An RNA of 177 nucleotides, treated with DMS and 2A3 and read out base by base.

RNA sequence: GGGAACGACUCGAGUAGAGUCGAAAAAGAGCGUCUACGGACGCUCAUUUAUGCGGCAGCAUAGGACCGAAUUGUGGGAGAACUUCUAUGAUUCUACCCCUUUUCAUUUUUAUGCUGCUCUGGAGAAUACCGUAGAGGUUUUCGAACCUCUACGGUAAAAAGAAACAACAACAACAAC
Reactivity to DMS in 0.01 (KOAc 150mM, MgCl2 10mM, bicine 150mM(pH8.5), 24C), signal-to-noise 2, nucleotides 027 to 126: a060g010a010g030c020g000u000c000u020a110c160g040g010a050c010g030c000u000c000a000u010u000u010a040u010g020c160g010g010c000a000g010c000a000u020a000g000g000a030c200c110g000a020a010u000u000g010u060g020g050g000a030g000a040a010c030u010u040c240u040a130u010g000a140u000u000c000u000a160c000c000c000c010u000u000u000u000c010a140u000u000u000u020u000a000u000g000c000u010g000c000u000c030u000g020g020a160g010a130a220
Reactivity to 2A3 in 0.01 (KOAc 150mM, MgCl2 10mM, bicine 150mM(pH8.5), 24C), signal-to-noise 4, nucleotides 027 to 126: a010g000a000g000c010g000u000c000u030a080c300g050g010a000c000g000c000u000c000a000u010u000u000a190u100g110c110g000g030c000a000g000c000a000u000a000g010g010a040c050c030g010a070a000u010u020g060u300g030g000g010a020g020a020a010c020u180u080c060u210a220u140g100a300u090u020c020u250a300c000c000c020c000u000u000u000u000c000a010u000u010u050u000u000a000u000g000c000u000g030c020u030c010u010g010g030a110g060a110a060

It was measured as part of the RMDB library RFM100. For DMS, 2,629 sequencing reads were counted. The RNA was probed in 150 mM KOAc, 10 mM MgCl2 and 150 mM bicine (pH 8.5) at 24 C. 2A3 adducts were read by reverse transcription with SuperScript II with manganese.